[RMDB]
RNA sequence: GGGAACGACUCGAGUAGAGUCGAAAAUAUAUUCUGGCUAAAGGGCCGUUACAAGUAGGAGAUUCAGUUCUCUUGCAAGGCCAUUCUCUAGCUAAGAAUAUCCUGCAUGUCGUAGGCCCAGAUGCCCAUAUCCUGUACUUUUCGAAGUACAGGAUAUAAAAGAAACAACAACAACAAC
Reactivity to DMS in 0.01 (KOAc 150mM, MgCl2 10mM, bicine 150mM(pH8.5), 24C), signal-to-noise 9, nucleotides 027 to 126: u020a040u000a000u010u000c000u000g000g010c000u010a010a070a030g000g000g010c010c000g030u020u040a120c210a100a110g010u000a010g000g000a020g000a020u010u020c300a150g000u000u000c000u000c000u010u000g000c000a090a050g000g020c000c020a190u040u040c030u000c070u000a010g000c010u000a030a030g000a010a000u000a000u000c010c000u000g000c020a100u030g020u030c130g010u000a040g000g010c040c010c020a140g000a100u020g000c020c010c090
Reactivity to 2A3 in 0.01 (KOAc 150mM, MgCl2 10mM, bicine 150mM(pH8.5), 24C), signal-to-noise 9, nucleotides 027 to 126: u160a000u010a010u010u010c010u010g010g000c010u010a020a030a080g010g000g000c010c010g020u090u170a100c100a170a050g010u020a000g030g020a010g010a030u070u120c050a080g300u140u010c020u000c000u000u000g010c020a050a090g010g000c010c020a040u300u030c030u000c010u030a000g000c010u050a170a050g000a000a000u000a010u010c000c000u010g020c040a040u210g120u300c110g020u040a040g020g000c010c010c000a040g010a060u160g040c010c010c000
Conditions: 150 mM KOAc, 10 mM MgCl2 and 150 mM bicine (pH 8.5), 24 C.
Structure probing data (DMS and 2A3) for a 177-nucleotide construct.
Values cover nucleotides 27 to 126.
DMS adducts were read by reverse transcription with MarathonRT.